Chemical mapping of a 207-nucleotide RNA with DMS and 2A3. The RNA was probed in 150 mM KOAc, 10 mM MgCl2 and 150 mM bicine (pH 8.5) at 24 C. The 2A3 profile rests on 2,799 reads. For DMS, 2,819 sequencing reads were counted. It was measured as part of the RMDB library M2RFOK.

[RMDB]
RNA sequence: GGGAACGACUCGAGUAGAGUCGAAAACAUCUUUCCUCCCUACACAGUGACUCCAGCUUGGGAGGGGCAGGGCUAGGCUGAGCCAGCACUCCCUGUGGUGUCUGCCUGCCACGUGCAGCUCUGCAGUAAAACCUGGAGAAGUUCGCUUCUCCAGGAAGUUACGAAGUUUGUUCGCAAACUUCGUAACAAAAGAAACAACAACAACAAC
Reactivity to DMS in 0.01 (KOAc 150mM, MgCl2 10mM, bicine 150mM(pH8.5), 24C), signal-to-noise 1, nucleotides 027 to 156: c060a150u010c050u000u010u000c010c000u000c010c000c000u040a090c150a180c130a110g000u020g000a150c080u020c010c020a230g020c120u020u000g020g030g000a020g030g000g000g060c040a010g000g000g020c000u000a080g030g000c020u000g000a200g020c090c050a080g060c030a040c030u020c030c070c030u000g030u030g010g020u000g000u020c000u000g000c030c010u000g000c010c030a130c170g000u000g000c050a080g020c000u000c020u010g000c000a290g020u020a050a080a060a150c000c000u000g000g010a010g020a020a010g050u010u010c300g030c000u010u030c000u000c000c000a010g010g010a000a030
Reactivity to 2A3 in 0.01 (KOAc 150mM, MgCl2 10mM, bicine 150mM(pH8.5), 24C), signal-to-noise 4, nucleotides 027 to 156: c030a120u080c090u080u170u060c000c000u020c000c000c000u100a070c170a010c030a090g030u040g110a060c020u020c080c040a010g030c030u060u060g000g000g000a000g000g000g000g000c000a000g000g020g000c000u130a060g000g000c020u030g030a030g070c040c010a010g000c010a000c020u120c080c110c040u120g080u190g040g000u020g020u040c000u010g010c000c000u020g000c000c000a090c070g090u180g020c010a040g000c000u010c000u010g010c000a000g020u010a010a050a030a020c000c000u000g000g000a000g000a000a000g000u030u090c140g020c140u000u000c000u000c000c000a000g000g000a000a000